[RMDB]
RNA sequence: GGGAACGACUCGAGUAGAGUCGAAAAGAAGAGAUUUAUCAGACUAGCCUUACGGAAGCCUGUCGCUGGGCUGAAGUAACGGCGAAAUGCGAAUACAGUGACUACGCUCGUAGAAGCUUAAGUACUCGUUAUUUCUGGACGUGGGUUCGAUUCCCACCAAUAAUCGCUGCUUCGGCAGCGAUUAUUGAAAAGAAACAACAACAACAAC
Reactivity to DMS in 0.01 (KOAc 150mM, MgCl2 10mM, bicine 150mM(pH8.5), 24C), signal-to-noise 1, nucleotides 027 to 156: g000a100a120g000a110g030a120u000u000u030a170u000c040a060g020a160c020u000a160g050c000c010u000u000a060c030g000g020a300a170g020c000c000u010g010u000c170g030c130u000g020g060g000c000u010g030a300a260g010u020a020a020c110g010g000c010g020a010a040a070u000g010c000g010a040a010u000a070c000a110g000u010g000a210c040u000a020c030g000c080u000c210g020u000a020g000a080a100g010c000u010u000a030a100g020u000a050c030u000c000g020u000u010a080u000u010u000c000u010g020g000a050c150g060u040g000g020g040u010u030c040g000a300u000u000c000c000c000a080c060
Reactivity to 2A3 in 0.01 (KOAc 150mM, MgCl2 10mM, bicine 150mM(pH8.5), 24C), signal-to-noise 2, nucleotides 027 to 156: g100a070a010g070a010g020a020u060u130u130a120u160c010a010g040a060c020u040a020g000c000c000u000u000a010c000g020g000a020a000g000c000c000u090g130u180c080g020c080u130g010g010g000c000u000g010a030a000g000u000a010a000c100g000g000c000g000a000a000a000u120g030c040g030a000a000u020a000c000a030g000u010g050a010c000u020a010c010g040c050u040c090g000u090a050g030a130a010g060c030u140u140a100a010g010u060a090c040u030c030g030u030u100a040u050u070u020c030u030g080g030a030c060g000u010g000g030g030u080u060c010g030a040u020u090c000c000c000a000c000